The data come from the RNA Mapping Database (RMDB), library OK1LIB.
Structure probing data (2A3) for a 177-nucleotide construct.
2A3 adducts were read by reverse transcription with SuperScript II with manganese.
Reactivities are rounded to 0.1 and cut off at 0 and 3.
The 2A3 profile rests on 1,244 reads.
RNA sequence: GGGAACGACUCGAGUAGAGUCGAAAAGCGGGUGCGGCGUCGAGCAGGAUCACCCGGCACUCACUGGGCGUGAUGGUCCUAAACGCGCCUGCCAGGGUGCGCUCGGCGAGCUCGACGAUCUGCCCAGGCGGCAGAUAGGGUUCGCCCUAUCUGCCGCAAAAGAAACAACAACAACAAC
Reactivity to 2A3 in 0.01 (KOAc 150mM, MgCl2 10mM, bicine 150mM(pH8.5), 24C), signal-to-noise 2, nucleotides 027 to 126: g090c060g030g000g020u160g000c040g060g000c000g060u010c000g000a000g030c020a070g070g030a060u250c030a030c010c000c000g000g000c020a060c020u080c010a100c050u070g000g010g000c020g030u020g020a220u080g050g030u070c050c010u060a050a110a000c020g000c000g070c020c000u000g040c020c030a100g020g000g000u050g000c010g000c040u090c030g040g000c000g030a000g040c000u010c000g080a080c040g000a130u000c030u050g010c000c000c000a000g050